[RMDB]
RNA sequence: GGGAACGACUCGAGUAGAGUCGAAAAGGGCCAGUUUUCCGCGAUAAAUGGUCAACAUGGCGGUCGCAGUCGGGUGCGCCAUGGCCCGGCCUGCAUGAGUUUGAAAUCGGCUGCACAUUGGAACAUAAUUUAGGCAUUUAUUCGUAAAUGCCUAAAUAAAAGAAACAACAACAACAAC
Reactivity to 2A3 in 0.01 (KOAc 150mM, MgCl2 10mM, bicine 150mM(pH8.5), 24C), signal-to-noise 5, nucleotides 027 to 126: g010g010g010c010c010a010g010u020u000u050u020c020c010g070c030g050a020u140a180a160a030u120g010g010u040c020a010a010c040a050u050g030g000c030g020g010u060c070g000c010a010g020u030c020g040g000g040u160g060c010g000c000c030a040u040g020g000c000c000c000g020g020c000c020u010g000c020a090u130g060a070g200u150u250u250g130a070a070a040u060c000g020g000c020u030g030c020a020c000a070u050u180g080g020a080a010c030a070u190a110
Reactivity to DMS in 0.01 (KOAc 150mM, MgCl2 10mM, bicine 150mM(pH8.5), 24C), signal-to-noise 9, nucleotides 027 to 126: g010g010g010c010c010a100g010u000u000u000u000c010c020g020c090g020a150u010a050a090a070u000g010g010u000c060a070a090c030a050u010g010g010c010g010g010u000c110g010c020a030g010u000c020g010g000g020u000g010c050g010c030c030a130u010g010g010c000c010c010g000g010c040c040u000g010c080a080u010g010a100g010u010u000u010g010a050a090a090u000c030g010g000c010u000g010c020a120c140a110u000u000g010g000a080a090c120a100u010a100
The record gives the reactivity of an RNA of 177 nucleotides to 2A3 and DMS. DMS adducts were read by reverse transcription with MarathonRT. For 2A3, 7,414 sequencing reads were counted.